[RMDB]
RNA sequence: GGGAACGACUCGAGUAGAGUCGAAAAGCUCAACCAAAAGUAACUGCGAACAACAUCGUUCCUUUCGCUCGUAAGGCUGCUCCUGUAGCUGCUUAAACGCCACAAACUUUCUGGCUCGAGCGUCUAGUCGUAGACUCCGUUAAUACGCCUAGACUUAGCAUAAUGAAUACUUCGGUAUUCAUUAUGCAAAAGAAACAACAACAACAAC
Reactivity to DMS in 0.01 (KOAc 150mM, MgCl2 10mM, bicine 150mM(pH8.5), 24C), signal-to-noise 3, nucleotides 027 to 156: g050c030u010c020a070a100c040c030a080a110a050a080g000u000a070a070c040u000g010c040g010a040a050c080a110a140c100a150u000c030g020u000u000c040c020u000u000u000c040g040c010u000c040g030u000a140a090g030g050c020u000g000c040u000c050c070u050g010u000a050g010c010u010g000c020u000u010a070a090a130c100g030c030c010a070c050a060a070a110c100u000u000u000c040u020g040g030c020u010c040g040a050g030c080g000u010c010u000a020g000u000c000g030u010a040g010a160c090u000c080c150g040u010u010a100a220u000a010c020g010c070c000u000a030g000a040c000u000u000a180
Reactivity to 2A3 in 0.01 (KOAc 150mM, MgCl2 10mM, bicine 150mM(pH8.5), 24C), signal-to-noise 7, nucleotides 027 to 156: g020c010u020c020a050a060c030c020a060a050a010a040g040u060a090a080c070u110g020c040g030a050a040c060a040a040c010a190u040c030g000u000u020c010c000u040u070u050c030g000c010u010c020g030u020a050a020g020g010c020u030g000c000u030c030c070u150g140u220a000g010c030u050g000c010u030u050a090a300a030c050g050c060c030a080c090a060a190a090c080u060u140u070c090u050g010g000c010u020c070g000a010g010c000g000u000c000u000a000g000u000c000g010u010a020g050a090c060u030c120c000g030u030u070a060a010u000a030c000g000c000c000u000a000g010a000c000u020u080a010

This 207-nucleotide RNA was probed chemically with DMS and 2A3. 2A3 adducts were read by reverse transcription with SuperScript II with manganese. For DMS the reverse transcriptase was MarathonRT.